[RMDB]
RNA sequence: GGGAACGACUCGAGUAGAGUCGAAAAGCGAUCACCUCGGACCGUCCGGCCAUCUCGCCGCCGAUCGGUGGGCGGGUGGUGGUAAACCACGCGGCCAACGCGGGGUUGUCGCGGACCAUCCGCAACGUGCCCUAUAGAGCUUCGGCUCUAUAGGGCAAAAAGAAACAACAACAACAAC
Reactivity to DMS in 0.01 (KOAc 150mM, MgCl2 10mM, bicine 150mM(pH8.5), 24C), signal-to-noise 1, nucleotides 027 to 126: g000c080g020a030u000c250a030c050c050u010c080g010g020a180c120c120g030u020c130c030g000g010c050c070a070u000c050u000c040g000c010c060g000c040c080g010a050u020c120g030g080u000g000g030g010c010g000g010g030u020g010g000u000g000g020u000a030a060a030c050c020a040c120g030c080g000g020c030c020a210a020c100g000c010g040g000g000g000u000u000g010u000c020g020c010g010g000a150c040c050a060u000c050c050g060c080a070a040c080g000